[RMDB]
RNA sequence: GGGAACGACUCGAGUAGAGUCGAAAAGAUAUGGAUACGUGAUGACCAACAGCGUGUCGGUCGGAAACGACCGCACGACAUGGUCGCACGUAUCCUAAGUCAAAAGGGCUUACUUCGGUAAGCCCAAGUUAACCCUCUUGUUCGCAAGAGGGUUAACAAAAGAAACAACAACAACAAC
Reactivity to DMS in 0.01 (KOAc 150mM, MgCl2 10mM, bicine 150mM(pH8.5), 24C), signal-to-noise 2, nucleotides 027 to 126: g000a030u010a220u000g000g000a010u000a000c000g020u000g000a060u010g010a000c000c010a060a060c220a180g010c010g020u000g000u020c020g020g010u000c010g020g000a050a030a060c010g020a010c000c000g000c000a010c010g000a020c030a280u030g040g010u000c010g030c010a000c000g010u000a010u000c000c000u000a010a020g010u000c010a060a080a150a140g010g000g000c000u000u000a000c000u000u020c270g010g000u000a000a010g000c000c000c000a000a000
Reactivity to 2A3 in 0.01 (KOAc 150mM, MgCl2 10mM, bicine 150mM(pH8.5), 24C), signal-to-noise 3, nucleotides 027 to 126: g020a020u030a020u070g010g000a000u000a010c010g030u020g070a300u130g010a050c050c080a300a100c290a200g000c000g030u030g210u300c080g030g000u010c020g000g000a010a040a030c020g010a000c010c020g010c000a000c010g040a010c030a130u300g010g000u000c000g000c000a000c000g000u000a000u000c000c000u010a000a000g010u000c020a000a030a110a200g010g000g000c020u010u010a010c010u040u160c300g030g000u010a000a000g000c000c000c030a000a000